The data come from the RNA Mapping Database (RMDB), library M2PK90. The record gives the reactivity of an RNA of 177 nucleotides to 2A3 and DMS. For 2A3, 7,951 sequencing reads were counted. Reactivities are given for positions 27 through 126. 2A3 is a SHAPE reagent: it acylates the 2'-hydroxyl of flexible nucleotides of all four kinds. The RNA was probed in 150 mM KOAc, 10 mM MgCl2 and 150 mM bicine (pH 8.5) at 24 C. In probing experiments dimethyl sulfate is read out at A N1 and C N3, which are open when not base-paired. 2A3 adducts were read by reverse transcription with SuperScript II with manganese.
RNA sequence: GGGAACGACUCGAGUAGAGUCGAAAAUACACUUUACGUGUGCUGGUUUCAUUACUUUGUCCCAAACCAGGCACGCGUAAUUAAAGGCCAGUUUGGCCACGUCCGCGUUAUCGAUGGUCACCAAUAACGUAGUGUACACUUUCGAGUGUACACUACGAAAAGAAACAACAACAACAAC
Reactivity to 2A3 in 0.01 (KOAc 150mM, MgCl2 10mM, bicine 150mM(pH8.5), 24C), signal-to-noise 5, nucleotides 027 to 126: u090a020c030a030c090u050u020u010a000c010g000u000g000u010g000c000u000g020g010u030u030u060c080a070u090u190a130c100u200u150u220g090u100c010c000c000a000a000a000c020c010a050g180g000c000a000c000g000c000g000u000a000a010u040u120a110a070a020g010g010c010c010a080g100u100u210u150g050g000c000c020a010c030g020u000c020c030g040c050g030u030u050a090u130c060g040a080u080g040g040u040c030a040c100c020a050a080u110a100a010
Reactivity to DMS in 0.01 (KOAc 150mM, MgCl2 10mM, bicine 150mM(pH8.5), 24C), signal-to-noise 5, nucleotides 027 to 126: u020a100c150a150c110u010u000u000a000c020g010u000g000u000g020c000u000g010g010u000u000u010c120a100u010u010a100c160u000u010u010g000u000c020c040c020a060a040a020c000c000a040g000g010c010a000c000g000c010g020u000a000a010u000u000a060a090a070g020g010c000c010a120g020u000u010u000g030g020c010c020a040c100g010u000c030c050g000c080g000u010u000a060u010c040g010a060u000g010g000u000c040a100c060c060a060a110u020a090a180